[RMDB]
Chemical mapping of a 177-nucleotide RNA with DMS and 2A3. It was measured as part of the RMDB library OK1LIB.
RNA sequence: GGGAACGACUCGAGUAGAGUCGAAAAGAUUACGUGUCGUUGUGGAAUCGAUACUACGCACGAGAUUCCAAGGUCUCUGUAGUACGUCCGCUGGUGACGUCUGUGGAGUCACGUUCGAUAUACGAAAGGUAUCAACAACCUUCGGGUUGUUGAUACCAAAAGAAACAACAACAACAAC
Reactivity to DMS in 0.01 (KOAc 150mM, MgCl2 10mM, bicine 150mM(pH8.5), 24C), signal-to-noise 1, nucleotides 027 to 126: g010a090u010u050a190c070g050u000g000u000c010g050u000u000g050u000g030g010a070a100u000c040g000a100u020a090c090u000a040c000g040c050a000c040g000a300g000a010u000u020c000c030a100a040g000g000u020c030u060c000u000g000u000a020g000u030a010c010g000u040c040c000g000c210u040g000g010u030g090a000c010g030u000c000u000g000u000g000g030a010g000u000c000a190c090g030u000u000c070g030a050u030a050u000a050c150g000a000a150a150
Reactivity to 2A3 in 0.01 (KOAc 150mM, MgCl2 10mM, bicine 150mM(pH8.5), 24C), signal-to-noise 1, nucleotides 027 to 126: g040a100u000u160a030c050g000u000g180u160c050g000u040u060g030u000g000g090a150a170u060c080g020a020u130a070c060u110a000c030g030c000a000c050g000a010g000a070u070u000c030c000a140a070g040g010u010c000u000c030u080g020u000a000g000u140a010c010g050u000c000c000g000c280u120g030g170u140g010a020c020g000u000c000u010g000u040g000g020a000g010u000c010a000c080g020u020u010c020g000a000u000a070u030a020c130g080a110a050a040